[RMDB]
RNA sequence: GGGAACGACUCGAGUAGAGUCGAAAAAGGCUGGCGCACCGUAUCGGUGUCCCUGAGCAGACCGGCGGGACGAUUCUUUCAUGGCGGGGCCUGUGCAUACCCCGUUUCAUCACCGGUUUGCAAACCUAACUUGUACACCCUUCGGGGUGUACAAGUUAAAAGAAACAACAACAACAAC
Reactivity to DMS in 0.01 (KOAc 150mM, MgCl2 10mM, bicine 150mM(pH8.5), 24C), signal-to-noise 1, nucleotides 027 to 126: a000g000g050c170u000g050g030c300g050c000a080c000c000g000u070a050u120c060g040g060u030g000u030c300c020c020u000g000a280g040c010a000g000a020c050c000g000g080c080g030g000g040a060c260g000a170u120u010c300u050u020u000c060a040u040g000g000c000g020g020g030g010c120c130u010g000u100g000c050a230u010a220c000c000c000c000g060u000u000u040c020a030u020c100a000c000c000g000g000u010u030u000g000c010a000a030a100c000c150u000
Reactivity to 2A3 in 0.01 (KOAc 150mM, MgCl2 10mM, bicine 150mM(pH8.5), 24C), signal-to-noise 3, nucleotides 027 to 126: a000g090g070c070u080g040g000c050g000c030a000c000c010g110u210a130u230c120g000g000u010g030u060c010c010c000u050g000a050g000c000a000g000a000c000c000g000g010c010g040g030g030a000c070g090a110u160u120c050u140u290u050c160a050u110g010g000c000g010g010g000g020c010c040u240g040u110g080c040a050u120a300c000c010c000c040g000u010u050u080c020a090u080c000a000c000c030g000g000u000u000u020g000c000a000a000a000c000c010u000